Chemical mapping of a 177-nucleotide RNA with 2A3 and DMS. 2A3 adducts were read by reverse transcription with SuperScript II with manganese. For DMS, 44,329 sequencing reads were counted. For DMS the reverse transcriptase was MarathonRT. The reactions ran in a buffer of 150 mM KOAc, 10 mM MgCl2 and 150 mM bicine (pH 8.5), at 24 C.

RNA sequence: GGGAACGACUCGAGUAGAGUCGAAAAGAUGACUGACAUGUCGCAGAGAGAGUGCAAGGCGAGUUGUCGCUUCACUCUCUCAAGGCAAGUGAAGCAGGACAGGUGCCUUCAUUACGUGUUAGUCAGAGAUAGGUGACUUGUUCGCAGGUUAUCUAUCAAAAGAAACAACAACAACAAC
Reactivity to 2A3 in 0.01 (KOAc 150mM, MgCl2 10mM, bicine 150mM(pH8.5), 24C), signal-to-noise 9, nucleotides 027 to 126: g130a050u060g000a000c000u000g000a000c000a010u030g010u060c060g000c130a010g010a000g000a000g000a000g020u030g020c140a120a050g080g020c020g020a060g070u180u130g230u210c000g000c000u010u020c000a000c000u000c000u000c000u000c000a000a000g000g000c010a010a010g010u000g020a010a000g000c020a020g030g130a060c050a080g090g100u040g050c020c000u000u010c020a030u030u110a020c040g000u010g010u020u010a000g000u000c010a000g010a000
Reactivity to DMS in 0.01 (KOAc 150mM, MgCl2 10mM, bicine 150mM(pH8.5), 24C), signal-to-noise 9, nucleotides 027 to 126: g000a120u010g010a020c000u000g010a010c020a040u010g000u000c200g000c100a180g010a010g000a020g000a010g010u000g000c300a110a050g010g010c010g000a050g010u040u030g000u010c010g010c000u000u010c000a000c000u000c010u000c000u000c010a020a060g000g010c080a180a060g010u000g000a020a010g010c020a110g000g010a130c300a130g000g010u040g000c090c020u000u000c020a010u000u010a070c100g020u000g000u000u010a010g010u000c000a030g010a120